[RMDB]
RNA sequence: GGGAACGACUCGAGUAGAGUCGAAAAGAUAUGGACUACCACAUCACGAAUAUUCGCGAUAAGCUCGUAUCGGAAACGAUACAGAGCUUUUGACGCGAAUAUUCGUGAUGUGUGUAGUCCUAAGUCACCUUCUAACCAAGUUCGCUUGGUUAGAAGGAAAAGAAACAACAACAACAAC
Reactivity to DMS in 0.01 (KOAc 150mM, MgCl2 10mM, bicine 150mM(pH8.5), 24C), signal-to-noise 2, nucleotides 027 to 126: g010a020u010a300u000g000g000a010c000u000a020c000c010a000c000a000u000c000a010c010g030a020a020u000a010u000u010c000g030c000g010a190u000a040a010g020c000u000c000g000u000a000u000c010g000g000a140a110a300c000g010a000u000a010c010a140g030a010g010c010u000u000u000u000g010a300c050g000c010g010a000a000u000a010u010u000c010g030u030g000a010u000g020u010g010u010g000u000a000g000u000c000c000u000a000a090g000u000c070a270